[RMDB]
RNA sequence: GGGAACGACUCGAGUAGAGUCGAAAAGAUAUGGACUAGAGCAAUGACGCCACGUAGUUACCGUAACAUCGGUCGGAAACGACCGUGGGUAGGUUCGAAGUGGUAAGACAGCUCUAGUCCUAAGUCAGAUAGGCAUCAGGUUCGCCUGAUGCCUAUCAAAAGAAACAACAACAACAAC
Reactivity to DMS in 0.01 (KOAc 150mM, MgCl2 10mM, bicine 150mM(pH8.5), 24C), signal-to-noise 1, nucleotides 027 to 126: g000a060u050a300u000g000g000a050c070u010a000g020a050g020c000a070a220u050g000a260c260g000c000c000a010c000g000u000a230g020u000u000a020c000c000g050u000a230a150c050a040u010c050g060g000u000c000g050g000a100a140a150c000g010a000c000c000g000u000g000g000g000u020a230g000g000u000u000c000g020a130a300g020u050g000g000u020a070a180g000a180c170a130g000c000u020c010u000a000g010u000c000c000u000a000a120g000u000c060a150
Reactivity to 2A3 in 0.01 (KOAc 150mM, MgCl2 10mM, bicine 150mM(pH8.5), 24C), signal-to-noise 2, nucleotides 027 to 126: g030a050u120a050u160g080g020a050c110u000a010g000a000g050c070a180a300u200g000a040c110g000c050c020a020c020g100u100a090g070u150u180a040c060c100g300u300a090a030c000a030u280c070g010g020u000c010g020g000a140a080a030c000g000a020c010c010g000u000g000g130g060u230a040g000g150u000u150c000g000a070a020g020u000g000g000u000a000a000g010a000c000a020g060c000u000c000u000a000g000u000c000c000u000a000a000g010u000c000a040
Structure probing data (DMS and 2A3) for a 177-nucleotide construct. Values are in units of 0.01, from 0 to 300, in steps of 10. DMS adducts were read by reverse transcription with MarathonRT. The RNA was probed in 150 mM KOAc, 10 mM MgCl2 and 150 mM bicine (pH 8.5) at 24 C. 2A3 adducts were read by reverse transcription with SuperScript II with manganese. The DMS profile rests on 597 reads.